[RMDB]
Structure probing data (DMS and 2A3) for a 177-nucleotide construct. It was measured as part of the RMDB libraries RFM100 and RFMREP. 2A3 adducts were read by reverse transcription with SuperScript II with manganese.
RNA sequence: GGGAACGACUCGAGUAGAGUCGAAAAUUUAGUGCCUUCCGUCCCCAAACCGCCAACAGCCAGGGCGGCCUCUCCCCGCGGUUUGUCAAAUGAUCCGCAGGGCCCGGAAGAGCCUUCGUCUCACCCGCAAUAUCUGUAUGUUCGCAUACAGAUAUUGAAAAGAAACAACAACAACAAC
Reactivity to DMS in 0.01 (KOAc 150mM, MgCl2 10mM, bicine 150mM(pH8.5), 24C), signal-to-noise 8, nucleotides 027 to 126: u020u010u010a050g010u020g020c010c010u000u010c010c010g010u010c030c010c000c040a070a120a140c040c010g000c020c030a070a120c130a110g000c090c080a090g000g000g010c020g000g000c060c030u000c080u000c020c010c010c050g030c020g000g000u000u010u010g000u000c240a080a110a120u030g000a040u010c010c020g030c020a070g010g000g020c300c150c010g000g020a050a030g000a120g010c010c010u010u000c090g000u010c040u010c090a130c010c000c020g000
Reactivity to 2A3 in 0.01 (KOAc 150mM, MgCl2 10mM, bicine 150mM(pH8.5), 24C), signal-to-noise 9, nucleotides 027 to 126: u120u100u070a100g010u090g070c000c000u010u010c020c010g060u080c010c000c000c000a040a070a030c010c010g010c010c010a070a040c020a130g090c050c020a050g030g030g010c000g000g000c000c000u050c010u010c000c010c000c010g000c010g000g000u040u050u070g050u030c000a030a060a150u240g030a030u020c000c000g000c030a050g010g010g000c020c040c000g010g010a020a000g030a030g020c010c000u030u050c030g060u010c010u020c030a060c000c010c000g020